[RMDB]
RNA sequence: GGGAACGACUCGAGUAGAGUCGAAAAGCUGAGUAUACGAGGUUAGUUCAUUCUCGUAUGCAUGAUUGGACAUAUUAAAAUCUCAAUUUGGAUCAGGGCCUCCCUCCAGCGACGGCCGAACAUACAAAGAAGUGUAAAAAUUCGUUUUUACACUUCUAAAAGAAACAACAACAACAAC
Reactivity to 2A3 in 0.01 (KOAc 150mM, MgCl2 10mM, bicine 150mM(pH8.5), 24C), signal-to-noise 5, nucleotides 027 to 126: g000c010u020g010a000g040u020a000u010a000c000g010a000g000g060u110u110a050g080u200u270c060a050u210u060c020u000c010g000u020a000u020g000c010a060u080g020a050u030u100g040g040a020c030a040u220a060u130u280a090a140a120a150u060c090u010c140a040a120u080u040u150g110g030a070u100c070a070g100g000g000c000c000u000c020c010c000u060c030c000a030g010c010g030a020c010g010g030c010c000g000a000a010c020a030u170a030c030a010a160
Reactivity to DMS in 0.01 (KOAc 150mM, MgCl2 10mM, bicine 150mM(pH8.5), 24C), signal-to-noise 6, nucleotides 027 to 126: g010c020u000g000a170g030u000a010u000a010c010g000a010g000g000u010u010a100g010u010u010c150a070u010u000c000u000c010g000u000a010u000g010c030a090u000g000a070u000u000g000g000a060c080a040u010a150u000u010a070a080a090a100u000c050u010c050a050a080u000u000u000g010g010a100u010c090a090g010g000g000c030c010u000c010c010c020u010c060c020a030g020c040g010a070c120g010g020c020c030g000a040a040c120a060u010a120c190a050a070

Structure probing data (2A3 and DMS) for a 177-nucleotide construct. Conditions: 150 mM KOAc, 10 mM MgCl2 and 150 mM bicine (pH 8.5), 24 C. It was measured as part of the RMDB library M2PK90.